[RMDB]
RNA sequence: GGGAACGACUCGAGUAGAGUCGAAAAUACACGCGGAUCACGUUCGGCGGCGGCGGCGCUCAUGCGUCGCGCUGCUCGGCGAUCAUCGACCAGGCCGUCGACGUGGCGCAGCGCGUGCAUGAGGAAUGCCCGGCCGAGCUGUGGCACGACCUCACCAGAGUAUCAAUCACUUCGGUGAUUGAUACUCAAAAGAAACAACAACAACAAC
Reactivity to 2A3 in 0.01 (KOAc 150mM, MgCl2 10mM, bicine 150mM(pH8.5), 24C), signal-to-noise 2, nucleotides 027 to 156: u170a030c080a020c060g010c000g030g030a040u030c010a030c040g000u110u050c010g010g030c010g050g000c020g030g000c200g000g000c060g030c000u040c050a060u150g020c020g100u120c020g010c020g000c000u010g000c000u010c010g030g000c010g020a080u160c070a050u090c070g050a080c040c030a120g150g120c050c050g030u010c000g010a000c020g000u030g050g010c040g000c000a010g010c000g020c000g000u000g000c000a050u030g000a000g060g030a180a030u020g000c000c010c010g000g000c000c070g020a010g040c030u050g020u130g010g040c070a040c020g120a100c000c010u030c040a030c050c060a030